[RMDB]
This 177-nucleotide RNA was probed chemically with 2A3 and DMS.
RNA sequence: GGGAACGACUCGAGUAGAGUCGAAAAUAGACGAGAAGUAUAGCAAUCGUCAUACCCGUAUCUCUCUAUGUGACGAUUGGUGAAUGCAACAUUAGAGAGAUUAGGUAGCAUUCACACAACUUCUCGAGAUAGUUAGGAGAUUCGUCUCUUAGCUAUCAAAAGAAACAACAACAACAAC
Reactivity to 2A3 in 0.01 (KOAc 150mM, MgCl2 10mM, bicine 150mM(pH8.5), 24C), signal-to-noise 9, nucleotides 027 to 126: u170a010g140a040c010g000a000g010a020a010g030u070a050u180a210g100c020a010a010u010c010g020u010c020a000u100a100c010c020c010g030u070a160u030c050u000c010u000c010u040a030u130g020u020g010a010c020g020a030u010u050g050g000u020g010a010a000u020g010c040a080a040c030a160u090u220a040g030a020g010a010g030a120u060u140a090g040g020u020a020g000c000a000u000u010c010a000c000a000c000a060a110c010u000u000c000u000c000g020a030
Reactivity to DMS in 0.01 (KOAc 150mM, MgCl2 10mM, bicine 150mM(pH8.5), 24C), signal-to-noise 9, nucleotides 027 to 126: u050a090g010a230c020g010a010g000a010a010g000u000a090u020a280g010c020a010a030u000c010g000u000c010a030u000a070c030c010c040g010u030a070u000c020u000c000u010c020u000a110u010g020u010g010a030c030g000a030u000u000g000g020u010g000a020a000u000g000c010a140a080c030a160u020u010a060g000a030g000a040g010a170u010u030a040g010g010u000a080g000c010a000u000u000c000a010c000a200c190a080a030c020u000u000c000u000c010g010a150
Overview:
Values cover nucleotides 27 to 126. The data come from the RNA Mapping Database (RMDB), library OK1LIB. The RNA was probed in 150 mM KOAc, 10 mM MgCl2 and 150 mM bicine (pH 8.5) at 24 C.